[RMDB]
RNA sequence: GGGAACGACUCGAGUAGAGUCGAAAAGGAUCCUCACACAGGAUUGUCUCUGUGUUCCGAAACUCCAACAGUAUUGCUUCGGGACACCUACAGCAAUACUGUAGGUAUAGAGAGUAGGUGAGGAUCGCGACCGAUUUUAUUUCGAUAAAAUCGGUCGAAAAGAAACAACAACAACAAC
Reactivity to DMS in 0.01 (KOAc 150mM, MgCl2 10mM, bicine 150mM(pH8.5), 24C), signal-to-noise 3, nucleotides 027 to 126: g030g010a020u000c000c000u000c000a060c020a150c080a170g000g020a150u020u000g020u000c020u000c000u000g010u010g020u000u000c000c000g000a060a060a040c030u010c150c110a100a150c200a130g010u010a170u010u010g010c080u000u000c180g000g000g000a020c140a070c000c000u000a080c040a050g030c020a060a120u010a300c000u000g000u000a000g000g010u020a070u010a010g010a040g000a060g030u000a050g000g000u030g010a020g020g020a010u000c000g000
Reactivity to 2A3 in 0.01 (KOAc 150mM, MgCl2 10mM, bicine 150mM(pH8.5), 24C), signal-to-noise 2, nucleotides 027 to 126: g040g000a000u000c000c010u000c000a000c010a000c010a040g180g110a240u120u280g170u040c020u000c010u020g070u010g000u060u000c020c020g040a030a030a020c030u060c160c030a150a090c040a190g110u140a140u100u220g010c010u000u030c020g010g000g000a020c040a050c000c010u020a010c020a030g030c030a050a120u070a290c000u000g010u000a000g000g040u040a040u160a100g040a020g000a030g020u110a020g000g080u000g010a000g000g000a000u010c000g000
An RNA of 177 nucleotides, treated with DMS and 2A3 and read out base by base. For DMS the reverse transcriptase was MarathonRT. The RNA was probed in 150 mM KOAc, 10 mM MgCl2 and 150 mM bicine (pH 8.5) at 24 C. Reactivities are given for positions 27 through 126.